[RMDB]
RNA sequence: GGGAACGACUCGAGUAGAGUCGAAAAGAGCAGCUGUGCCGCCAGUACAUCGAGGCCUCCGUGGACCUGCAGAACGUGCUGGUUGUGUGCGAGAGUGCCGCCCGGCUGCAGCUGAGCCAACUCAAGGUGUGGGGUGGGGUCAGCGCAAUCAGGGUUGGUCGAAAUACUUUUUCGAAAGUAUUUCGACAAAAGAAACAACAACAACAAC
Reactivity to DMS in 0.01 (KOAc 150mM, MgCl2 10mM, bicine 150mM(pH8.5), 24C), signal-to-noise 1, nucleotides 027 to 156: g030a120g000c010a070g020c040u000g020u000g000c000c020g020c000c030a050g000u000a060c010a070u010c030g010a060g020g080c000c000u000c080c300g010u010g010g010a050c010c010u000g030c060a160g020a050a070c070g030u000g000c000u000g000g000u000u010g050u010g070u010g000c040g000a170g040a080g030u000g000c010c020g000c000c000c030g010g010c020u000g000c020a110g050c000u000g000a060g000c000c010a020a010c000u010c020a110a140g030g020u020g030u010g000g020g010g040u000g000g000g000g000u000c010a000g050c000g000c050a060a030u000c020a160g030g000g020u000u000g030
Reactivity to 2A3 in 0.01 (KOAc 150mM, MgCl2 10mM, bicine 150mM(pH8.5), 24C), signal-to-noise 6, nucleotides 027 to 156: g060a020g000c020a000g000c010u030g000u040g060c010c000g000c010c000a000g010u020a010c010a050u060c030g020a010g020g000c010c000u090c060c150g140u300g090g110a300c030c010u060g050c060a100g010a080a030c100g010u010g000c000u000g000g000u090u060g050u030g000u010g020c030g030a040g000a020g070u050g020c000c020g000c000c010c000g000g000c010u010g000c020a090g000c010u020g000a030g060c010c010a030a020c010u030c060a090a110g200g010u130g110u120g080g030g000g030u050g010g010g000g050u010c010a000g000c010g000c010a000a030u020c070a120g000g010g020u100u130g070
Annotation
An RNA of 207 nucleotides, treated with DMS and 2A3 and read out base by base. Values cover nucleotides 27 to 156. The data come from the RNA Mapping Database (RMDB), library OK3TST. For DMS, 4,415 sequencing reads were counted. The RNA was probed in 150 mM KOAc, 10 mM MgCl2 and 150 mM bicine (pH 8.5) at 24 C. DMS adducts were read by reverse transcription with MarathonRT.